[RMDB]
RNA sequence: GGGAACGACUCGAGUAGAGUCGAAAAUCAUGUCAGUAAGCAUGCCGGGGAAUGGUGGUUUACCCCGUUAUCAAAUGAUUACCGACCAAUAAUUGGCGAAACUCGUUUAGCGUUGGCUGCCUAAUUCGUUACCGCUGACCCUUCGGGGUCAGCGGAACCUAUGGCAUAUCUUCGGAUAUGCCAUAGGAAAAGAAACAACAACAACAAC
Reactivity to 2A3 in 0.01 (KOAc 150mM, MgCl2 10mM, bicine 150mM(pH8.5), 24C), signal-to-noise 1, nucleotides 027 to 156: u060c030a010u040g100u070c020a000g230u190a170a110g000c010a000u050g060c030c010g000g000g000g020a010a060u080g000g030u060g030g020u100u070u140a090c000c000c000c000g050u090u090a040u010c040a030a050a050u040g040a040u070u080a040c000c020g050a060c000c110a030a010u130a130a030u140u120g000g020c020g060a030a020a120c050u050c030g090u040u180u240a080g050c000g000u060u000g070g000c050u020g060c060c000u100a090a070u070u130c080g050u060u090a090c000c000g000c040u000g000a020c010c020c020u050u010c300g060g000g000g000u000c030a000g000c010g030g000a000a000